[RMDB]
The data come from the RNA Mapping Database (RMDB), library OK2TST.
Chemical mapping of a 177-nucleotide RNA with 2A3 and DMS.
Values cover nucleotides 27 to 126.
DMS (dimethyl sulfate) methylates the pairing face of unpaired adenines and cytosines.
The reactions ran in a buffer of 150 mM KOAc, 10 mM MgCl2 and 150 mM bicine (pH 8.5), at 24 C.

RNA sequence: GGGAACGACUCGAGUAGAGUCGAAAAUUUUCGGAGCUGGUUGGGGUAGCGGUACUACUAGCUUGGACUUGACUAUCGGUAGCAGCAGCAGAAGUGGCUUGGACUUGACCGUCACCAAUUUGAGAGAAGUAGUAUGUACAUUCGUGUACAUACUACUAAAAGAAACAACAACAACAAC
Reactivity to 2A3 in 0.01 (KOAc 150mM, MgCl2 10mM, bicine 150mM(pH8.5), 24C), signal-to-noise 6, nucleotides 027 to 126: u070u060u030u060c030g070g010a030g000c030u030g060g030u070u070g030g000g000g040u040a020g020c010g020g020u030a050c010u010a020c000u020a020g050c000u020u060g060g020a050c010u050u090g030a050c010u050a060u130c030g030g000u010a020g020c030a000g000c000a000g010c010a010g010a130a010g060u040g030g000c000u040u060g040g020a040c000u030u050g030a040c010c020g020u010c000a030c060c010a060a130u130u180u200g130a160g000a010g010a110
Reactivity to DMS in 0.01 (KOAc 150mM, MgCl2 10mM, bicine 150mM(pH8.5), 24C), signal-to-noise 9, nucleotides 027 to 126: u010u000u000u010c040g010g010a090g020c050u000g010g010u010u000g000g010g010g010u000a050g010c050g010g010u010a080c070u000a080c070u000a060g010c070u000u000g010g010a060c100u000u000g010a100c070u000a060u010c080g010g010u000a060g020c040a060g010c040a050g010c040a060g010a070a080g020u000g010g000c040u000u000g010g010a060c050u000u000g000a080c080c060g010u000c080a100c060c050a050a110u000u000u000g000a140g010a150g000a110